RNA sequence: GGGAACGACUCGAGUAGAGUCGAAAAUGGGUGUUGUGGGACAGUGUAGAUUAGAGUCUGGCUGGCAACAUGCCCAACCUACCAAUCGCUUGUCUGAGCAGGGAGCUAUGGAGGUUAACUAGCUCAACCUAGCACGGACAUUCGUGUCCGUGCUAGGAAAAGAAACAACAACAACAAC
Reactivity to 2A3 in 0.01 (KOAc 150mM, MgCl2 10mM, bicine 150mM(pH8.5), 24C), signal-to-noise 1, nucleotides 027 to 126: u060g060g000g030u220g030u130u130g000u070g020g110g050a010c010a010g010u040g110u300a020g030a050u040u210a050g050a020g300u100c020u070g000g000c000u030g040g040c030a030a000c020a040u120g040c000c010c000a080a050c000c010u030a020c000c040a100a090u020c090g040c100u090u070g000u260c130u170g070a010g040c050a010g040g050g000a000g000c000u020a040u140g030g040a160g150g000u030u020a010a070c050u000a010g040c010u030c030a040a100